[RMDB]
RNA sequence: GGGAACGACUCGAGUAGAGUCGAAAACAGGGUCACGUUGUGUGGGUCCGUGUGGCACCAUCUCUGGAUCACGUUGUGUGGAUCCAUGUGGCACCAUCUCUGGAUCACGUUGUGUGGAUCUGCAUGGGCCUCUUAUCUCAUUCGUGAGAUAAGAGGCAAAAGAAACAACAACAACAAC
Reactivity to 2A3 in 0.01 (KOAc 150mM, MgCl2 10mM, bicine 150mM(pH8.5), 24C), signal-to-noise 3, nucleotides 027 to 126: c020a010g020g000g060u010c010a010c040g060u080u110g040u040g040u130g110g050g040u020c000c010g000u010g000u010g010g000c010a010c020c000a020u030c030u000c000u030g020g020a010u000c020a020c110g150u300u300g260u150g050u120g300g020a030u000c000c000a000u050g010u000g020g000c010a040c010c000a080u080c060u000c070u300g030g000a000u000c000a000c050g020u070u100g020u000g020u000g060g020a050u030c010u020g010c050a130u080g120g180
Reactivity to DMS in 0.01 (KOAc 150mM, MgCl2 10mM, bicine 150mM(pH8.5), 24C), signal-to-noise 2, nucleotides 027 to 126: c050a080g000g000g000u000c010a050c040g010u000u000g010u000g020u000g000g010g030u000c010c000g020u000g010u010g000g020c070a230c010c000a020u000c020u010c010u000g000g000a030u000c010a020c030g010u020u030g000u010g020u010g020g010a020u000c000c000a010u010g000u000g000g010c050a170c020c010a010u010c050u010c030u010g020g010a040u000c020a040c050g000u010u000g000u000g010u000g010g000a060u000c010u000g000c120a130u000g020g010
The data come from the RNA Mapping Database (RMDB), library OK2TST.
Structure probing data (2A3 and DMS) for a 177-nucleotide construct.
Reactivities are given for positions 27 through 126.
For DMS, 3,678 sequencing reads were counted.
2A3 adducts were read by reverse transcription with SuperScript II with manganese.
The 2A3 profile rests on 2,639 reads.
Conditions: 150 mM KOAc, 10 mM MgCl2 and 150 mM bicine (pH 8.5), 24 C.